[RMDB]
Description
The record gives the reactivity of an RNA of 177 nucleotides to 2A3 and DMS. The 2A3 profile rests on 11,682 reads. DMS (dimethyl sulfate) methylates the pairing face of unpaired adenines and cytosines. For DMS the reverse transcriptase was MarathonRT. For DMS, 7,573 sequencing reads were counted.

RNA sequence: GGGAACGACUCGAGUAGAGUCGAAAACCGAUUCCCUUCGGGGAAUCGGAAAGAAAGCACGAAAAUAAAAUAAAGGGAAAGGGAACGUGCACCGACCCAUAAAAAGAACCAUCUUCGGAUGGUUCAACAUAACACAUUUGUUCGCAAAUGUGUUAUGAAAAGAAACAACAACAACAAC
Reactivity to 2A3 in 0.01 (KOAc 150mM, MgCl2 10mM, bicine 150mM(pH8.5), 24C), signal-to-noise 5, nucleotides 027 to 126: c000c000g000a010u000u010c010c000c000u020u070c230g050g010g000g000a000a000u010c010g010g000a030a010a000g040a040a060a000g000c020a000c070g180a300a110a050a050u200a040a100a060a020u250a100a120a090g030g000g020a150a130a040g030g010g010a120a050c000g000u000g010c000a000c000c010g030a040c000c000c020a010u160a020a110a020a000a010g010a000a000c000c000a000u000c010u050u080c170g090g000a000u000g010g000u000u000c000a000a000
Reactivity to DMS in 0.01 (KOAc 150mM, MgCl2 10mM, bicine 150mM(pH8.5), 24C), signal-to-noise 6, nucleotides 027 to 126: c000c000g010a030u000u000c000c000c000u000u020c170g020g000g020g010a010a010u010c000g000g000a010a040a080g000a110a100a110g020c010a000c000g000a150a080a060a080u010a050a050a030a080u010a070a130a140g010g000g000a040a090a130g000g000g000a050a120c030g010u000g020c000a200c040c010g000a300c010c000c000a130u040a050a050a060a130a120g000a000a000c000c000a010u000c000u000u010c210g010g000a000u000g010g010u000u000c000a030a110